[RMDB]
RNA sequence: GGGAACGACUCGAGUAGAGUCGAAAAGAAUCCUCGUCGACGAUUUUGAUUUCGCAGAGCAUCUGUAUGUUUUGUUUCUGGACUUAGCCAUAUGUCUCUCUCAAUCGUCGUCGAGGAUACAAUUAGAGGGUUCCGAUUAGUUCGCUGAUCGGAACCCAAAAGAAACAACAACAACAAC
Reactivity to 2A3 in 0.01 (KOAc 150mM, MgCl2 10mM, bicine 150mM(pH8.5), 24C), signal-to-noise 5, nucleotides 027 to 126: g060a010a020u000c000c000u000c000g000u000c000g000a000c000g000a000u000u030u070u150g120a140u050u140u150c140g010c100a000g000a000g000c010a030u030c040u090g070u130a190u050g010u050u020u030u030g080u010u080u070c070u090g040g000a020c020u020u070a010g040c030c020a040u040a030u140g120u050c010u010c000u000c000u000c030a000a010u000c000g020u000c000g000u000c000g010a000g000g010a000u010a010c000a000a070u120u140a040g020a090
Reactivity to DMS in 0.01 (KOAc 150mM, MgCl2 10mM, bicine 150mM(pH8.5), 24C), signal-to-noise 1, nucleotides 027 to 126: g000a140a040u000c000c000u000c000g000u010c000g000a000c000g020a000u000u000u050u030g000a080u010u000u020c120g050c130a040g000a030g000c000a050u040c060u000g030u010a040u010g000u000u010u000u000g000u000u000u010c000u010g030g000a090c010u000u060a060g010c090c050a030u000a070u000g060u020c010u020c010u000c030u030c110a010a000u000c000g000u000c010g010u000c010g000a000g000g010a000u000a010c090a050a120u010u010a030g000a300